RNA sequence: GGGAACGACUCGAGUAGAGUCGAAAACAGGUAGCCCAGACCUUCAAGGCUACGGUGCGUUGCUACGCACGGUCUGAUUCUUCACAACGACGUUCACCGCGUCUUCUUCCAUCCCCCUGGGGCAGUGUAUAACCAGCAGCCUUCGGGCUGCUGGUAAACUCACAUAGUGAUUCGUCACUAUGUGAGUAAAAGAAACAACAACAACAAC
Reactivity to DMS in 0.01 (KOAc 150mM, MgCl2 10mM, bicine 150mM(pH8.5), 24C), signal-to-noise 2, nucleotides 027 to 156: c030a050g020g020u000a040g010c010c000c150a110g010a090c000c020u000u010c030a090a270g020g010c000u000a040c000g020g040u000g020c020g040u010u010g040c150u010a210c030g000c020a050c000g030g010u010c020u000g000a240u010u020c080u010u000c060a140c070a040a120c050g010a080c010g000u000u000c090a080c100c050g000c060g020u000c000u000u010c040u000u000c030c030a130u010c020c000c000c020c020u000g010g030g030g050c050a100g010u000g020u000a110u000a090a090c030c000a050g020c000a030g000c000c000u000u000c300g040g050g020c030u000g030c000u040g000g000u000a000a020